[RMDB]
RNA sequence: GGGAACGACUCGAGUAGAGUCGAAAACAUGAUGGCACAGUUCACUGGCACCUGUUGUGUUUCAUGCGCAAAAAAGACCGCCGUGCCAUCACUGCAUUACUGCGUAAGUUUGCCAUCCGUGAAGACCGCGAGGAGCUGGGCAAUAACACUGGGCCGCAAGCCUAUAUUAAUUCGUUAAUAUAGGCUUAAAAGAAACAACAACAACAAC
Reactivity to DMS in 0.01 (KOAc 150mM, MgCl2 10mM, bicine 150mM(pH8.5), 24C), signal-to-noise 2, nucleotides 027 to 156: c040a080u010g030a040u000g020g040c000a040c020a050g010u000u000c100a130c060u010g020g000c000a100c090c040u010g000u000u000g010u000g000u000u000u000c040a090u000g020c040g030c060a000a020a050a100a100a050g020a120c040c010g020c030c060g000u010g000c000c010a060u000c030a030c070u000g000c040a120u000u000a110c050u010g020c080g030u000a080a170g020u000u000u000g000c020c010a080u000c040c030g000u000g000a080a100g010a060c030c030g000c020g000a110g030g000a070g040c030u000g020g020g010c020a040a090u000a050a080c060a090c020u000g010g010g050c040c020g000c100
Reactivity to 2A3 in 0.01 (KOAc 150mM, MgCl2 10mM, bicine 150mM(pH8.5), 24C), signal-to-noise 3, nucleotides 027 to 156: c040a040u070g000a010u020g020g000c000a010c010a030g090u220u150c060a080c260u080g030g000c020a050c060c020u020g010u030u010g000u030g050u010u230u220c100a120u300g000c040g030c040a030a000a030a050a000a020g060a040c030c020g040c050c030g000u000g000c000c010a000u000c000a000c010u020g000c020a100u050u190a120c020u050g040c010g050u080a070a110g050u030u080u060g060c030c000a060u010c030c040g050u030g110a070a010g070a110c030c080g040c010g070a140g080g040a030g050c030u120g010g000g000c050a030a070u090a120a000c050a020c070u050g000g010g030c020c020g010c030
An RNA of 207 nucleotides, treated with DMS and 2A3 and read out base by base. The data come from the RNA Mapping Database (RMDB), library OK3TST. Conditions: 150 mM KOAc, 10 mM MgCl2 and 150 mM bicine (pH 8.5), 24 C. As a SHAPE reagent, 2A3 marks flexible, mostly unpaired nucleotides at the ribose 2'-OH. For 2A3, 1,869 sequencing reads were counted. For DMS the reverse transcriptase was MarathonRT. For 2A3 the reverse transcriptase was SuperScript II with manganese. Reactivities are given for positions 27 through 156. The DMS profile rests on 6,920 reads.